Structure probing data (2A3) for a 207-nucleotide construct. For 2A3, 440 sequencing reads were counted. For 2A3 the reverse transcriptase was SuperScript II with manganese. The RNA was probed in 150 mM KOAc, 10 mM MgCl2 and 150 mM bicine (pH 8.5) at 24 C. It was measured as part of the RMDB library ARCHII.
RNA sequence: GGGAACGACUCGAGUAGAGUCGAAAAAGAUGGUUCUAUUUCUCAAUCUUUCUGACUUGCUCCUACGAAACCAAGGUCGAAAAGAUUGAAAAAAUCAGUCAUUCACAACCACUGAUGAAGGAUUCCUCGAAAAGUUAAGGAUUAGUAAUCCUUUUUAGUACAUCGAUACCUUCGGGUAUCGAUGUACAAAAGAAACAACAACAACAAC
Reactivity to 2A3 in 0.01 (KOAc 150mM, MgCl2 10mM, bicine 150mM(pH8.5), 24C), signal-to-noise 1, nucleotides 027 to 156: a000g060a060u070g000g000u030u080c060u040a100u040u110u060c090u010c000a010a010u000c000u020u070u020c080u190g020a000c010u000u080g020c030u100c020c100u220a170c230g040a030a010a020c000c020a100a010g120g110u010c000g040a000a020a020a000g000a010u000u000g000a030a000a000a000a000a000u100c020a000g060u020c030a040u120u170c110a030c020a170a090c060c000a020c000u020g060a030u030g020a070a030g000g010a050u030u080c020c030u020c020g060a220a050a000a000g050u080u220a060a000g010g020a030u040u130a030g070u130a050a060u020c000c000u020u000u000u110u210a000